[RMDB]
RNA sequence: GGGAACGACUCGAGUAGAGUCGAAAAUCUACUGGUCCCUGCCAGACAUGUACGUCGACCCGGUGACGUUCCGCUCCACGCAGCAAGUUAGCAACUACCCCGUGGUGGGAGCGGAGCUGAUGCCCAUUCACAGCAAGAGCUUUUACAACGAGCAGGCCAAUUCAUCUCGGUUCGCCGAGAUGAAUUGAAAAGAAACAACAACAACAAC
Reactivity to 2A3 in 0.01 (KOAc 150mM, MgCl2 10mM, bicine 150mM(pH8.5), 24C), signal-to-noise 3, nucleotides 027 to 156: u020c000u030a020c010u040g000g020u060c000c020c030u000g030c010c020a020g040a100c060a090u240g080u190a050c020g020u000c030g030a080c010c080c000g000g020u050g040a010c000g000u010u000c000c000g000c010u000c000c000a080c050g040c020a040g000c050a120a030g070u130u170a040g080c060a060a080c040u180a110c030c010c070c120g070u110g080g190u110g040g050g010a020g000c000g000g000a000g000c010u030g010a040u100g000c000c010c010a040u100u100c050a030c010a040g030c000a110a100g040a040g050c050u050u070u160u170a090c060a120a030c060g010a020g000c020a020g080g000c000
Reactivity to DMS in 0.01 (KOAc 150mM, MgCl2 10mM, bicine 150mM(pH8.5), 24C), signal-to-noise 1, nucleotides 027 to 156: u000c030u000a100c050u010g030g030u000c030c000c030u010g050c030c080a140g070a060c070a080u000g030u000a050c120g000u010c000g050a190c080c040c060g010g040u000g010a180c040g010u020u000c020c030g010c010u000c000c000a040c080g020c050a060g010c050a030a050g010u000u000a260g010c050a200a180c050u000a040c000c010c020c040g010u010g010g010u010g000g000g010a000g020c030g000g000a050g000c030u010g030a190u010g010c030c000c030a120u000u030c060a160c030a130g010c050a050a110g000a180g030c030u000u000u000u000a160c050a090a040c100g030a040g010c030a070g040g040c140